[RMDB]
RNA sequence: GGGAACGACUCGAGUAGAGUCGAAAAGCCACUUACGGACACUCCGUCUGACGUACACUCUCACUCGCAUGACUAGUCAAAGUCAUGACUGUGAGCGAGUACGAGUGAUGGUCAGUUCGAGUGUGGAUCACCCCAGUGAGUUCGCUCACUGGGGUGAAAAAGAAACAACAACAACAAC
Reactivity to 2A3 in 0.01 (KOAc 150mM, MgCl2 10mM, bicine 150mM(pH8.5), 24C), signal-to-noise 2, nucleotides 027 to 126: g020c000c020a020c080u120u180a080c070g160g020a000c000a000c010u020c020c030g080u000c000u000g020a020c010g050u120a020c030a000c010u000c000u010c000a000c000u040c000g000c010a080u140g050a120c020u110a020g040u040c030a070a130a020g180u130c050a070u040g000a020c010u010g020u000g060a020g030c000g000a010g000u010a010c060g020a030g010u010g020a070u110g020g000u010c010a020g020u040u050c010g000a010g020u040g000u020g030g010a080
Reactivity to DMS in 0.01 (KOAc 150mM, MgCl2 10mM, bicine 150mM(pH8.5), 24C), signal-to-noise 2, nucleotides 027 to 126: g000c010c020a090c110u000u010a160c140g020g000a050c010a120c010u000c030c090g000u000c010u000g010a060c010g050u010a050c010a050c000u000c000u020c170a080c000u010c060g050c010a030u010g010a110c030u020a040g000u000c050a060a100a160g000u000c200a050u020g010a000c030u120g020u000g000a090g000c040g000a070g020u010a090c090g000a050g000u000g030a020u010g000g000u000c050a030g010u010u000c110g000a030g020u000g000u000g030g010a200

Structure probing data (2A3 and DMS) for a 177-nucleotide construct. The DMS profile rests on 1,367 reads. 2A3 adducts were read by reverse transcription with SuperScript II with manganese. Conditions: 150 mM KOAc, 10 mM MgCl2 and 150 mM bicine (pH 8.5), 24 C. The data come from the RNA Mapping Database (RMDB), library OK2TRN. For DMS the reverse transcriptase was MarathonRT.